[RMDB]
RNA sequence: GGGAACGACUCGAGUAGAGUCGAAAACAAUCUGCGCCUCGACUUCAGCUGAAUCCAUAUCUGUAUCAUUGCAAUCCCCGUGAAUAAAUACCACUCUUAGGAUAUACAGUGAGUGGACUUUCUAUAACAAUUUGCCAGUCAUAUAUCAUAUAAUUCAACUCAAUGUUCACUUCGGUGAACAUUGAGUAAAAGAAACAACAACAACAAC
Reactivity to 2A3 in 0.01 (KOAc 150mM, MgCl2 10mM, bicine 150mM(pH8.5), 24C), signal-to-noise 2, nucleotides 027 to 156: c020a000a050u050c000u050g000c010g040c040c010u030c020g010a060c050u020u010c050a010g050c030u090g000a000a040u000c020c000a000u040a070u030c020u070g060u040a020u090c000a090u040u080g030c050a030a110u050c000c000c000c000g040u050g020a020a040u080a200a050a010u050a040c040c020a020c030u010c000u100u090a060g000g090a020u070a090u090a240c040a120g030u020g110a020g060u030g040g000a040c040u040u070u060c050u050a050u070a090a000c030a060a120u010u020u130g030c000c000a020g000u090c040a010u070a080u020a000u130c030a020u140a020u020a210a170u130u100c000a000